[RMDB]
RNA sequence: GGGAACGACUCGAGUAGAGUCGAAAAUGGGAACCUUGUGAACCAUGUCAGGUCCGGAAGGAAGCAGCAUUAAGCAGUGUUCUCAUGUGCCGCGAGUCGCCUGGCCCGAGCUAACUAUCAGGGUAACGCAGAUGAUUGCAUGUCGAUGUGAGGUGCGCCCAUUAAUCUGGUUCGCCAGAUUAAUGGGAAAAGAAACAACAACAACAAC
Reactivity to 2A3 in 0.01 (KOAc 150mM, MgCl2 10mM, bicine 150mM(pH8.5), 24C), signal-to-noise 3, nucleotides 027 to 156: u030g010g020g020a030a000c030c040u050u030g020u010g020a070a100c120c080a050u010g050u070c010a010g000g020u020c010c020g030g070a130a070g030g000a010a010g000c010a000g000c010a010u040u060a060a020g000c010a010g020u000g000u080u000c010u000c020a000u070g050u100g050c030c020g040c030g010a030g010u050c030g000c030c010u020g040g010c000c000c000g000a010g040c060u090a050a080c010u020a080u210c040a080g040g000g000u030a050a030c070g000c030a010g010a130u060g020a060u070u180g060c050a020u090g050u060c040g020a040u040g060u060g050a040g000g030u030g020c040g020
Reactivity to DMS in 0.01 (KOAc 150mM, MgCl2 10mM, bicine 150mM(pH8.5), 24C), signal-to-noise 2, nucleotides 027 to 156: u000g030g020g000a040a040c010c020u000u030g040u000g030a080a170c150c130a120u010g010u010c140a240g000g000u000c010c020g050g010a150a150g010g000a030a300g000c030a210g010c010a070u000u000a140a300g040c040a090g020u000g020u000u000c020u000c000a030u000g030u000g000c050c000g020c030g000a070g010u000c030g000c000c020u000g010g000c000c010c050g070a090g000c080u000a070a090c070u000a100u010c110a100g000g010g050u000a070a070c050g010c040a090g000a180u030g010a070u000u010g010c000a090u000g020u000c030g000a110u000g050u000g010a120g030g020u000g000c040g010

About this RNA:
This 207-nucleotide RNA was probed chemically with 2A3 and DMS. Reactivities are rounded to 0.1 and cut off at 0 and 3. DMS adducts were read by reverse transcription with MarathonRT. Source: RMDB library ARCHII, as collected in RNAgym. 2A3 is a SHAPE reagent: it acylates the 2'-hydroxyl of flexible nucleotides of all four kinds.